RNA sequence: GGGAACGACUCGAGUAGAGUCGAAAACGAGGGUUCCCUAUAGUCCGCGUUGGCGGUGCUGCAACCCCGUGCGAUAGGCUAACUGCGGUAUUCCCCGCACUCCGUCGAGCGGUAAAUACGACGCUUAAAACUAAGUAGAAUUCGUUCUACUUAGUUUAAAAGAAACAACAACAACAAC
Reactivity to 2A3 in 0.01 (KOAc 150mM, MgCl2 10mM, bicine 150mM(pH8.5), 24C), signal-to-noise 9, nucleotides 027 to 126: c020g010a060g010g020g010u010u020c010c000c000u030a070u050a050g040u020c010c010g020c060g100u040u070g060g000c020g010g010u040g040c060u030g010c010a030a090c010c000c010c020g020u030g030c020g080a120u080a120g100g000c050u070a090a030c040u100g010c010g010g000u030a120u060u100c020c010c000c000g000c010a020c030u040c020c000g020u020c010g010a010g010c010g010g030u030a010a030a000u170a040c070g020a010c030g020c040u050u080a030
Reactivity to DMS in 0.01 (KOAc 150mM, MgCl2 10mM, bicine 150mM(pH8.5), 24C), signal-to-noise 9, nucleotides 027 to 126: c050g010a070g000g000g010u000u000c010c010c010u010a110u010a170g010u010c020c010g010c020g010u010u010g010g010c020g000g010u010g010c100u000g010c070a100a150c050c030c010c030g010u000g010c050g010a090u010a080g010g000c070u010a050a080c120u010g020c020g000g010u010a150u010u010c050c050c000c070g010c030a050c060u010c110c010g020u000c020g000a090g010c010g000g010u010a050a060a070u010a090c070g000a070c080g000c150u000u010a080
Background:
This 177-nucleotide RNA was probed chemically with 2A3 and DMS. For 2A3 the reverse transcriptase was SuperScript II with manganese. Reactivities are given for positions 27 through 126. It was measured as part of the RMDB libraries RFM100 and RFMREP.